[RMDB]
RNA sequence: GGGAACGACUCGAGUAGAGUCGAAAACUGAUCUGUCUUAGCUACAAGGCCUUCACAAUGGAAGUUUGUCUUUGCAUGGGCUCCACAGAAGCAACAGCUGAGUAGGACAUGCGUGGGAAACAGAGUCGCCAGAGAGACGCUUCCAGAAGGAAAGUCACCACCAUACGCAUUUCGAUGCGUAUGGUGGAAAAGAAACAACAACAACAAC
Reactivity to 2A3 in 0.01 (KOAc 150mM, MgCl2 10mM, bicine 150mM(pH8.5), 24C), signal-to-noise 1, nucleotides 027 to 156: c050u090g040a030u110c010u070g080u020c040u100u270a040g070c040u120a080c030a170a000g030g050c010c000u010u040c000a050c090a250a230u110g010g000a000a010g060u120u250u180g010u060c050u090u030u070g060c050a080u030g000g000g060c030u040c030c010a060c000a000g030a110a010g100c000a010a220c010a070g000c010u020g090a030g080u070a090g030g060a000c000a020u010g010c070g030u070g000g010g060a100a060a000c050a020g030a050g140u080c070g040c110c000a010g040a000g000a000g000a070c010g000c000u030u060c000c000a010g020a000a010g010g000a030a000a000g010u050c000a000
Source information: The record gives the reactivity of an RNA of 207 nucleotides to 2A3. It was measured as part of the RMDB library OK3TST. Values cover nucleotides 27 to 156. Reactivities are rounded to 0.1 and cut off at 0 and 3.